[RMDB]
RNA sequence: GGGAACGACUCGAGUAGAGUCGAAAAUAGCUUGUUUGACUCAGUAGAGGAAAGACUAGCUGCUUAAUUAGCAAAAGUUGUUAGCUAGAUAAUCUCUAGGUAACCCGGUAUCUGCGAGCUCCACCAGAGGCUUGCAAAAUACCGUCAUUUAUCUGGUACCGAACUCAAAGUUCGCUUUGAGUUCGGUAAAAGAAACAACAACAACAAC
Reactivity to 2A3 in 0.01 (KOAc 150mM, MgCl2 10mM, bicine 150mM(pH8.5), 24C), signal-to-noise 1, nucleotides 027 to 156: u080a000g020c000u000u080g030u000u020u090g050a000c000u000c050a100g170u260a130g240a010g010g130a190a050a000g090a010c080u060a000g010c020u020g040c000u210u100a290a260u110u270a130g070c070a080a110a010a060g090u250u080g030u010u060a030g110c000u000a020g010a000u070a120a050u050c040u000c000u020a030g000g160u000a000a000c000c000c000g000g000u010a000u000c010u000g000c000g000a000g000c000u000c010c000a030c010c000a000g010a000g030g000c000u010u000g000c000a000a000a000a060u050a000c030c030g050u010c000a040u100u120u240a050u000c010u000g020g000u000